[RMDB]
RNA sequence: GGGAACGACUCGAGUAGAGUCGAAAAGAUAUGGAGCAUGAAACUCGAAGAACCGUAACAUCUAUCGGAAACGAUAGUGGGGGAGAGUUGUGCUCCUAAGUCAAACGCUGCAGUUCGCUGCAGCGAAUCCCUAAUCGUACUUCGGUACGAUUAGGGAAAAAGAAACAACAACAACAAC
Reactivity to DMS in 0.01 (KOAc 150mM, MgCl2 10mM, bicine 150mM(pH8.5), 24C), signal-to-noise 2, nucleotides 027 to 126: g000a020u000a280u010g000g000a020g010c030a040u010g020a050a030a010c010u010c050g000a120a130g000a170a240c030c010g010u000a040a130c160a060u030c000u000a000u010c000g020g000a060a050a080c000g010a000u000a010g040u000g020g000g000g010g010a030g000a000g010u000u000g010u000g020c000u000c000c000u000a000a090g000u000c000a070a060a200c010g030c000u000g000c000a040g020u010u000c200g010c000u010g020c000a000g000c000g000a040a040
Reactivity to 2A3 in 0.01 (KOAc 150mM, MgCl2 10mM, bicine 150mM(pH8.5), 24C), signal-to-noise 2, nucleotides 027 to 126: g000a000u010a030u090g010g010a000g000c000a000u070g300a280a150a090c010u010c000g180a300a080g040a100a090c030c010g050u180a090a080c040a190u190c000u020a000u000c000g000g000a030a040a010c000g000a000u020a020g000u090g020g000g050g000g050a090g000a010g050u020u090g000u030g030c000u010c010c000u010a040a010g030u000c020a040a130a040c020g000c000u000g000c000a000g000u000u120c200g090c150u010g000c010a000g000c020g000a000a040